[RMDB]
RNA sequence: GGGAACGACUCGAGUAGAGUCGAAAAUCUAGCCUUGAGCUAAUGACUGAUGUCAGAUGCUUGGUCACCUUUGAGUGCACUGACUACAUUCAGUUCAUAAGAAGAAAACUCAAGAUUGAACGUUGGUCUGUUGGUGACCCACCAAAAGUCUAGUUCAACGCAUAGCAGUAUUCGUACUGCUAUGCGUAAAAGAAACAACAACAACAAC
Reactivity to 2A3 in 0.01 (KOAc 150mM, MgCl2 10mM, bicine 150mM(pH8.5), 24C), signal-to-noise 4, nucleotides 027 to 156: u040c010u030a030g050c010c010u020u020g030a020g030c050u080a070a040u050g020a020c000u030g030a020u080g030u020c000a020g050a250u090g040c030u040u060g030g010u040c020a050c040c020u140u150u300g130a130g050u060g000c000a000c000u020g010a010c010u050a040c060a130u030u080c010a010g020u050u060c010a020u080a130a010g110a050a000g010a020a110a030a010c010u010c010a000a010g030a090u010u120g010a060a040c080g000u020u040g010g040u040c070u080g030u060u030g050g020u020g020a040c000c010c020a050c000c000a010a040a030a030g040u030c030u060a020g020u040u060c010a020
Reactivity to DMS in 0.01 (KOAc 150mM, MgCl2 10mM, bicine 150mM(pH8.5), 24C), signal-to-noise 3, nucleotides 027 to 156: u000c040u000a110g010c050c020u000u010g020a000g010c020u000a090a100u010g010a060c010u000g000a100u000g000u000c030a090g000a120u010g010c030u000u010g000g010u000c020a030c040c030u010u020u000g050a220g000u010g030c020a030c000u010g000a030c050u010a130c110a090u010u000c010a050g020u010u010c040a080u000a070a250g010a150a180g010a100a080a060a070c020u000c010a040a040g000a110u000u000g000a060a070c070g020u010u000g000g010u000c040u000g010u000u010g030g010u000g020a100c030c030c030a120c030c080a060a080a100a110g010u000c050u000a100g010u000u010c070a210